[RMDB]
The record gives the reactivity of an RNA of 177 nucleotides to 2A3 and DMS. DMS adducts were read by reverse transcription with MarathonRT. The RNA was probed in 150 mM KOAc, 10 mM MgCl2 and 150 mM bicine (pH 8.5) at 24 C. Values cover nucleotides 27 to 126. The 2A3 profile rests on 9,151 reads. For 2A3 the reverse transcriptase was SuperScript II with manganese. For DMS, 7,320 sequencing reads were counted.

RNA sequence: GGGAACGACUCGAGUAGAGUCGAAAACGUCAGAAAGCCUACGGAAGCCGAACGGGUCGCCAACGCAACCGCCAAGUCCCUCCACCUCUUUGAGGCAGCCACCCAGCGCUCCAACCUCGCGUCCACCUCACUUCCCUUAUUUCGAUAAGGGAAGUGAAAAAGAAACAACAACAACAAC
Reactivity to 2A3 in 0.01 (KOAc 150mM, MgCl2 10mM, bicine 150mM(pH8.5), 24C), signal-to-noise 7, nucleotides 027 to 126: c030g040u040c030a020g150a080a120a020g060c000c030u050a060c030g060g030a090a010g030c020c020g030a090a030c050g030g020g030u060c030g010c010c000a040a020c050g020c030a030a040c020c000g000c020c010a040a020g070u050c020c000c000u020c000c010a040c000c010u070c040u070u080u190g030a040g020g030c010a020g030c010c000a030c010c000c000a010g020c040g000c010u000c010c000a040a060c000c010u010c000g010c000g020u000c000c010a050c010c020
Reactivity to DMS in 0.01 (KOAc 150mM, MgCl2 10mM, bicine 150mM(pH8.5), 24C), signal-to-noise 4, nucleotides 027 to 126: c130g030u010c050a120g010a110a100a080g020c050c000u000a060c080g000g020a110a120g010c030c040g000a080a170c050g010g000g000u020c040g010c020c030a070a080c110g010c040a080a070c070c020g000c050c040a030a130g000u000c020c010c010u010c070c050a080c030c020u000c030u000u020u000g010a080g020g030c090a080g000c070c010a060c010c010c010a060g000c030g020c070u000c010c030a040a120c090c010u000c030g000c050g030u020c030c050a090c070c030